Conditions: 150 mM KOAc, 10 mM MgCl2 and 150 mM bicine (pH 8.5), 24 C.
Chemical mapping of a 177-nucleotide RNA with 2A3 and DMS.
For 2A3, 3,151 sequencing reads were counted.

RNA sequence: GGGAACGACUCGAGUAGAGUCGAAAAGAUAUGGAAUCUGGCAGCUUUUGACGAUUUAAGGGUCGGAAACGACCCGGAGAUCGAUAAGCUGCAGAUUCCUAAGUCAAAAGUUGCGUUCGCGCAACAACGCGUUAACAAAGUUCGCUUUGUUAACGCGAAAAGAAACAACAACAACAAC
Reactivity to 2A3 in 0.01 (KOAc 150mM, MgCl2 10mM, bicine 150mM(pH8.5), 24C), signal-to-noise 2, nucleotides 027 to 126: g020a030u070a060u140g000g010a000a000u000c030u150g300g170c040a000g050c030u090u090u250u300g300a140c100g000a000u010u000u070a040a020g020g010g000u000c000g010g010a000a100a060c000g000a000c030c010c000g000g010a010g000a000u000c010g010a020u030a070a010g040c020u000g000c000a010g000a000u000u000c000c000u000a040a010g020u010c050a060a040a010a210g010u010u000g000c000g010u030u080c300g010c010g010c200a000a000c000a000a050
Reactivity to DMS in 0.01 (KOAc 150mM, MgCl2 10mM, bicine 150mM(pH8.5), 24C), signal-to-noise 2, nucleotides 027 to 126: g000a050u010a300u010g010g000a000a000u000c000u000g030g050c000a000g020c000u010u020u030u020g000a250c090g000a020u000u000u000a300a190g000g000g040u010c000g010g000a090a050a270c000g000a020c000c000c010g030g000a150g000a000u000c000g010a150u000a020a010g010c000u000g010c000a000g000a010u000u000c000c000u000a010a070g000u010c040a110a100a170a080g000u000u000g000c000g020u010u030c260g000c000g000c000a000a000c000a040a120